[RMDB]
RNA sequence: GGGAACGACUCGAGUAGAGUCGAAAAAGCCGCGUCCGAGGUUCCCAUUCAAAGGGGAGAGGGGGGGACUUGGAGCACAGGGGUCCAGUUCAGUCCGUGGGAUUACCCCGGAUCUCCCGUUCUCCACAUACACCAGAGUUCGCUCUGGUGAAAAGAAACAACAACAACAAC
Reactivity to 2A3 in 0.01 (KOAc 150mM, MgCl2 10mM, bicine 150mM(pH8.5), 24C), signal-to-noise 9, nucleotides 027 to 129: a000g040c020c010g020c050g040u010c010c010g020a010g010g000u020u020c000c010c000a020u100u100c080a040a070a030g020g010g020g000a070g020a050g000g000g000g000g000g000g000a010c010u040u100g030g010a030g020c080a020c040a150g030g010g010g010u020c030c020a010g010u070u110c010a020g040u000c020c030g040u250g010g000g030a150u090u300a300c000c000c000c000g000g010a040u000c010u010c000c000c000g010u030u000c010u000c000c010a040c010a050u180a020
Reactivity to DMS in 0.01 (KOAc 150mM, MgCl2 10mM, bicine 150mM(pH8.5), 24C), signal-to-noise 8, nucleotides 027 to 129: a020g030c010c030g000c140g030u000c000c000g030a030g000g000u020u010c000c000c000a130u020u030c070a040a130a140g080g020g000g030a110g030a110g040g010g000g020g010g030g010a030c070u010u010g000g000a070g010c200a080c070a080g000g000g000g000u050c110c050a110g020u020u010c120a050g000u000c050c040g060u040g000g020g020a180u050u040a120c040c010c000c010g020g020a070u000c040u000c000c000c000g020u000u000c000u030c000c030a070c120a080u070a100